The record gives the reactivity of an RNA of 177 nucleotides to 2A3 and DMS. For 2A3, 1,507 sequencing reads were counted. The RNA was probed in 150 mM KOAc, 10 mM MgCl2 and 150 mM bicine (pH 8.5) at 24 C. DMS adducts were read by reverse transcription with MarathonRT. 2A3 adducts were read by reverse transcription with SuperScript II with manganese.
RNA sequence: GGGAACGACUCGAGUAGAGUCGAAAAGGGGAUCCCGAGGAGGGAACCAACCAAAGAAGGGGAAUUUCCCGGUAGAAGUAUCUCCUAGAAGAACCGAGAGCAUCUCAGAUGAAGGAGAUCUCCCAAAUCCUAAAUCAAUGUUCGCAUUGAUUUAGGAAAAAGAAACAACAACAACAAC
Reactivity to 2A3 in 0.01 (KOAc 150mM, MgCl2 10mM, bicine 150mM(pH8.5), 24C), signal-to-noise 2, nucleotides 027 to 126: g000g030g000g020a050u000c000c000c000g010a130g100g110a020g000g000g000a020a000c010c000a000a030c030c000a080a130a010g170a060a120g020g000g060g000a060a130u020u030u120c030c000c000g040g000u140a070g020a180a000g030u100a040u000c010u010c020c000u050a090g090a220a030g050a110a040c060c070g060a020g010a010g120c040a120u040c000u020c060a110g040a140u150g060a060a030g010g000a010g000a010u020c010u020c000c020c000a040a130a040
Reactivity to DMS in 0.01 (KOAc 150mM, MgCl2 10mM, bicine 150mM(pH8.5), 24C), signal-to-noise 3, nucleotides 027 to 126: g000g020g010g010a080u010c030c010c000g000a090g010g000a180g010g010g000a150a100c070c050a150a170c030c020a080a070a120g040a130a170g000g000g000g020a150a160u000u000u000c010c010c000g030g020u010a030g000a070a060g000u000a020u000c000u000c000c010u000a090g000a160a130g000a110a100c080c070g000a040g010a150g010c170a050u010c000u000c030a060g000a120u000g020a120a060g000g000a040g010a020u000c010u000c000c000c010a060a090a140